[RMDB]
RNA sequence: GGGAACGACUCGAGUAGAGUCGAAAAAGGGAUCUGCGUGCUCACUGUUCUCUUGCCAAGACACGGAGUGGACAGUAACUCGCCUUUACACGGGCGUUGGUAUCAGUUCUUGCUUCGAAGCUGCGAAUCUUUUCUUGUACUUCGGUACAAGAAAAGAAAAAGAAACAACAACAACAAC
Reactivity to 2A3 in 0.01 (KOAc 150mM, MgCl2 10mM, bicine 150mM(pH8.5), 24C), signal-to-noise 1, nucleotides 027 to 126: a000g080g000g000a040u000c020u090g030c030g040u050g000c020u000c050a040c030u020g040u080u010c020u000c000u060u040g080c050c010a100a000g090a060c070a000c120g020g000a020g000u040g000g030a000c020a000g010u050a050a020c000u000c020g010c000c010u080u190u180a100c120a030c150g000g000g000c020g030u110u080g000g060u060a040u130c010a030g000u060u030c000u020u120g000c020u020u020c000g060a080a050g010c040u070g050c100g080a060a050
Reactivity to DMS in 0.01 (KOAc 150mM, MgCl2 10mM, bicine 150mM(pH8.5), 24C), signal-to-noise 2, nucleotides 027 to 126: a080g000g010g000a040u000c050u000g010c080g010u010g040c080u000c090a100c120u010g010u020u010c020u000c010u020u000g010c050c030a090a070g000a110c130a110c100g040g000a070g020u000g010g010a030c020a140g010u000a060a110c030u010c020g000c000c010u000u000u020a090c260a060c300g000g000g020c020g030u010u030g010g000u010a010u000c040a070g030u010u000c040u000u010g020c050u000u000c000g000a050a060g000c060u010g010c030g000a090a140
The record gives the reactivity of an RNA of 177 nucleotides to 2A3 and DMS. Conditions: 150 mM KOAc, 10 mM MgCl2 and 150 mM bicine (pH 8.5), 24 C. Source: RMDB library RFMREP, as collected in RNAgym. The DMS profile rests on 1,526 reads. Reactivities are given for positions 27 through 126. 2A3 is a SHAPE reagent: it acylates the 2'-hydroxyl of flexible nucleotides of all four kinds. The 2A3 profile rests on 1,224 reads. 2A3 adducts were read by reverse transcription with SuperScript II with manganese.